[RMDB]
RNA sequence: GGGAACGACUCGAGUAGAGUCGAAAAAUGAUAGUGACGAUAUUGAUGAUAGUGACAAUCUUGAUGCUAGUGACGAUAUCGAUCGUGACCUUGAUACGGAGCUGGAACUGCUAACUAGGAUGAAUGGAGUAAAUGGUUGGUUCGCCAACCAUUUACUAAAAGAAACAACAACAACAAC
Reactivity to DMS in 0.01 (KOAc 150mM, MgCl2 10mM, bicine 150mM(pH8.5), 24C), signal-to-noise 3, nucleotides 027 to 126: a040u020g000a060u030a090g020u000g000a170c090g000a030u010a020u000u000g000a060u020g010a090u000a030g010u000g000a090c080a100a050u030c080u020u000g030a060u010g020c000u020a070g000u070g010a090c030g020a040u000a040u000c030g020a060u010c040g070u000g000a060c050c020u000u010g050a110u020a070c120g000g000a060g000c060u000g020g020a020a070c050u000g000c050u000a050a080c050u000a070g000g000a030u010g000a110a120u020g010g040
Reactivity to 2A3 in 0.01 (KOAc 150mM, MgCl2 10mM, bicine 150mM(pH8.5), 24C), signal-to-noise 3, nucleotides 027 to 126: a000u140g040a020u000a030g160u100g060a060c050g000a020u020a020u170u140g060a100u100g050a020u000a040g050u040g100a070c040a020a090u040c090u050u120g040a120u110g050c010u010a030g120u040g220a020c000g020a020u010a030u070c040g060a110u040c060g030u020g070a110c000c040u000u020g040a040u060a210c050g000g000a040g030c000u040g000g010a000a050c010u010g060c000u020a040a040c020u050a140g000g050a070u120g070a100a090u120g120g040

An RNA of 177 nucleotides, treated with DMS and 2A3 and read out base by base.
The RNA was probed in 150 mM KOAc, 10 mM MgCl2 and 150 mM bicine (pH 8.5) at 24 C.
Source: RMDB library OK1LIB, as collected in RNAgym.
The DMS profile rests on 5,193 reads.
2A3 adducts were read by reverse transcription with SuperScript II with manganese.